[RMDB]
RNA sequence: GGGAACGACUCGAGUAGAGUCGAAAACCUCACUACAUUUUACUGUUCCUAAAGAAUUUGUGACAGGUACAGUAAAACGUAUUGCAAGGUUUAUCACUUCCUAUAAACAGGUAAAUAACAAUAUAUGAAAAGCAAAGACUGUUCGCAGUCUUUGCAAGUUGGGUUAUGUCUUCGGACAUAACCCAACAAAAGAAACAACAACAACAAC
Reactivity to 2A3 in 0.01 (KOAc 150mM, MgCl2 10mM, bicine 150mM(pH8.5), 24C), signal-to-noise 2, nucleotides 027 to 156: c000c000u040c000a010c020u000a010c000a060u020u000u000u010a000c000u000g000u040u070c000c000u050a110a150a020g060a250a200u300u240u190g150u210g080a060c100a070g010g000u010a000c000a000g010u000a000a000a000a000c020g000u000a000u000u030g020c070a040a060g030g020u000u020u000a110u170c070a000c030u010u000c010c000u040a030u110a170a110a010c020a020g070g080u070a120a160a100u070a120a050c020a070a030u170a060u120a030u300g150a050a120a010a010g020c020a000a000a000g000a000c000u000g020u080u110c210g030c070a010g000u000c000u010u000u000g020c000a000a000
Structure probing data (2A3) for a 207-nucleotide construct. For 2A3, 505 sequencing reads were counted. The data come from the RNA Mapping Database (RMDB), library M2RFOK. The RNA was probed in 150 mM KOAc, 10 mM MgCl2 and 150 mM bicine (pH 8.5) at 24 C.